[RMDB]
RNA sequence: GGGAACGACUCGAGUAGAGUCGAAAAGGGGUCGAGACCAAGCCUCGAUGAAAUGUAAGGGAGAAAGUCUGAAGCCUCCACGGACUUUCGAAGAACUUACAUGGAGAGGCUUCCCUCUCGACGGAGGCACCCAAAGCUUUUUCUUCGGAAAAAGCAACAAAGAUAACAGCUUCGGCUGUUAUCUUUGAAAAGAAACAACAACAACAAC
Reactivity to 2A3 in 0.01 (KOAc 150mM, MgCl2 10mM, bicine 150mM(pH8.5), 24C), signal-to-noise 1, nucleotides 027 to 156: g060g000g010g020u020c010g000a010g010a020c070c050a050a020g020c020c030u040c020g210a300u010g000a010a010a000u000g000u040a000a010g030g030g010a160g010a040a000a000g000u000c020u010g030a050a050g000c010c020u020c010c010a030c020g010g000a000c000u010u040u010c040g060a170a080g060a040a030c000u000u010a000c000a010u030g000g000a020g000a000g020g000c000u000u020c010c000c000u010c010u000c000g000a000c000g000g010a000g000g010c000a010c000c040c010a050a100a010g000c000u040u040u000u000u000c000u030u090c230g010g000a030a000a000a000a000g020c010a000a010
Reactivity to DMS in 0.01 (KOAc 150mM, MgCl2 10mM, bicine 150mM(pH8.5), 24C), signal-to-noise 1, nucleotides 027 to 156: g010g030g050g000u000c000g010a020g020a060c100c080a060a070g000c020c000u000c000g020a120u030g000a110a200a070u000g020u000a030a030g030g000g030a300g020a030a030a030g000u000c000u000g000a060a120g020c030c010u000c000c050a300c070g020g020a040c010u000u020u000c000g000a050a130g010a180a140c020u000u000a010c000a000u000g020g020a070g010a040g000g010c010u020u000c000c020c040u000c000u010c000g000a000c040g000g060a020g090g040c010a090c020c000c020a200a170a250g000c010u010u020u000u000u020c010u020u000c300g080g020a000a010a010a010a010g010c000a060a170
An RNA of 207 nucleotides, treated with 2A3 and DMS and read out base by base. The RNA was probed in 150 mM KOAc, 10 mM MgCl2 and 150 mM bicine (pH 8.5) at 24 C.